[RMDB]
RNA sequence: GGGAACGACUCGAGUAGAGUCGAAAAUAAACCCUUUGACUGCUCAAAAUGGGCGCCAUUGAAUGUUGGGCUGUGGAGGAAAAUUAACUUAUGCCUCGGUUUGAACGAAAAUGGUUAAACUUUAGGAACCGAGAAUUAGUUUCGACUAAUUCUCGGUAAAAGAAACAACAACAACAAC
Reactivity to 2A3 in 0.01 (KOAc 150mM, MgCl2 10mM, bicine 150mM(pH8.5), 24C), signal-to-noise 4, nucleotides 027 to 126: u100a040a020a010c000c020c000u010u030u120g140a060c050u030g020c000u000c020a110a250a260a300u160g010g020g000c000g000c000c000a010u000u020g080a150a130u170g010u030u010g040g000g000c040u040g040u130g080g030a070g000g140a050a050a030a050u140u070a130a060c030u070u030a020u250g040c000c000u010c010g000g020u000u020u120g150a030a000c010g050a090a000a000a080u040g040g000u010u070a030a050a090c050u100u120u090a110g150g030a040
Reactivity to DMS in 0.01 (KOAc 150mM, MgCl2 10mM, bicine 150mM(pH8.5), 24C), signal-to-noise 3, nucleotides 027 to 126: u030a070a120a160c010c010c020u000u010u030g000a060c080u030g000c020u010c020a090a090a120a160u030g000g000g000c040g000c010c010a020u000u010g000a140a090u010g010u010u000g000g000g000c020u010g010u020g020g010a020g010g000a050a070a070a120u000u020a050a060c150u000u020a100u120g000c000c000u000c050g000g000u000u000u000g010a040a060c030g000a060a090a020a040u010g000g000u000u010a040a070a090c110u000u010u010a100g000g000a180